[RMDB]
RNA sequence: GGGAACGACUCGAGUAGAGUCGAAAAGAUAUGGAUCGGUACAGGACAUGCCUGAUGAUCGGAAACGAUCAAUAGGCAACAGCCUGACCGAUCCUAAGUCAAAGGCUACAUGUUCGCAUGUAGCCAACUACCCAGUGUUCUUCGGAACACUGGGUAGAAAAGAAACAACAACAACAAC
Reactivity to 2A3 in 0.01 (KOAc 150mM, MgCl2 10mM, bicine 150mM(pH8.5), 24C), signal-to-noise 2, nucleotides 027 to 126: g010a000u000a000u080g000g010a010u040c010g030g090u190a300c030a000g000g020a080c140a300u300g000c020c000u070g010a100u030g010a010u020c010g020g000a020a030a010c000g000a010u010c000a010a020u080a020g020g000c020a070a070c150a040g000c000c000u000g000a000c010c000g000a010u000c000c010u000a000a000g000u040c030a090a060a110g000g010c000u000a010c000a010u030g050u060u120c300g060c190a000u000g000u030a000g010c000c010a000a000
Reactivity to DMS in 0.01 (KOAc 150mM, MgCl2 10mM, bicine 150mM(pH8.5), 24C), signal-to-noise 1, nucleotides 027 to 126: g030a020u000a140u010g000g000a010u000c000g020g010u000a150c000a000g000g000a020c110a100u000g000c020c000u000g030a090u000g020a000u020c000g010g010a040a020a030c000g010a010u000c000a010a050u000a000g000g010c020a060a020c180a280g010c000c000u010g000a050c000c010g030a000u000c000c000u000a000a040g000u000c000a130a100a110g010g010c000u000a020c000a000u000g010u000u010c300g040c010a010u000g000u000a040g020c000c000a000a010
This 177-nucleotide RNA was probed chemically with 2A3 and DMS.
The data come from the RNA Mapping Database (RMDB), library TTRDES.
Conditions: 150 mM KOAc, 10 mM MgCl2 and 150 mM bicine (pH 8.5), 24 C.
For DMS the reverse transcriptase was MarathonRT.